[RMDB]
RNA sequence: GGGAACGACUCGAGUAGAGUCGAAAAGAUGAGAAUACGUGACUUGGUCAGAGGCGGAAAGACACAAGCACGAACGAUUCAGUAGAGUAUCGACCCGCCAACAGAUGCACGUUGUGAUCGUGCUAGACAUACGUAGGAGGUUCGCCUCCUACGUAUGAAAAGAAACAACAACAACAAC
Reactivity to 2A3 in 0.01 (KOAc 150mM, MgCl2 10mM, bicine 150mM(pH8.5), 24C), signal-to-noise 9, nucleotides 027 to 126: g100a070u250g050a040g050a120a060u140a090c010g000u010g160a210c010u000u010g010g000u000c010a030g030a080g240g000c040g020g040a140a090a040g010a020c060a000c000a230a000g000c010a000c010g010a080a020c020g020a010u050u000c010a010g040u080a020g030a000g060u060a060u180c040g030a080c010c010c000g000c020c020a100a100c040a080g110a090u160g020c010a010c030g040u080u140g150u160g110a110u190c010g000u000g000c000u020a040g020a020
Reactivity to DMS in 0.01 (KOAc 150mM, MgCl2 10mM, bicine 150mM(pH8.5), 24C), signal-to-noise 6, nucleotides 027 to 126: g010a110u020g020a130g020a090a080u030a080c010g000u000g000a080c000u000u000g010g000u000c010a110g010a140g000g020c060g020g010a090a120a120g010a010c020a060c010a010a000g000c020a020c010g000a080a170c060g000a020u010u000c010a100g000u010a100g010a070g000u010a040u020c020g000a200c040c010c000g010c150c090a080a080c180a050g000a070u030g010c030a030c040g020u010u010g000u020g000a050u030c090g000u010g020c000u000a020g000a300
Background
Chemical mapping of a 177-nucleotide RNA with 2A3 and DMS. For DMS, 15,453 sequencing reads were counted. For DMS the reverse transcriptase was MarathonRT. 2A3 adducts were read by reverse transcription with SuperScript II with manganese.